[RMDB]
RNA sequence: GGGAACGACUCGAGUAGAGUCGAAAAACGAGUCCGUACGCGGACUCGAAGGGCCCCAGAAGCCCAAGGGGCCCAAACCUACCACUCAUUAGAUGCAUGGAAAUCACUAGGUGAUACGUCACCUAGAACACGCUUUUAAGCUUCGGCUUAAAAGCAACGGUAUGGAAUUGUUCGCAAUUCCAUACCGAAAAGAAACAACAACAACAAC
Reactivity to 2A3 in 0.01 (KOAc 150mM, MgCl2 10mM, bicine 150mM(pH8.5), 24C), signal-to-noise 2, nucleotides 027 to 156: a000c020g000a000g000u000c000c000g000u060a010c260g010c020g050g000a000c010u000c000g000a000a000g000g000g000c010c000c010c010a020g020a290a030g030c000c000c020a020a060g010g000g000g030c010c000c020a010a000a000c010c000u120a020c010c010a040c010u100c000a090u120u140a110g040a110u120g020c050a030u090g040g160a080a070a070u110c050a120c060u000a020g000g000u010g000a010u070a110c160g050u030c000a000c010c000u000a000g000a000a010c020a000c080g010c000u000u000u000u000a000a000g000c000u050u130c280g070g000c000u000u000a000a000a000a010g000c000a000a000

Conditions: 150 mM KOAc, 10 mM MgCl2 and 150 mM bicine (pH 8.5), 24 C. Structure probing data (2A3) for a 207-nucleotide construct. For 2A3 the reverse transcriptase was SuperScript II with manganese. Values are in units of 0.01, from 0 to 300, in steps of 10.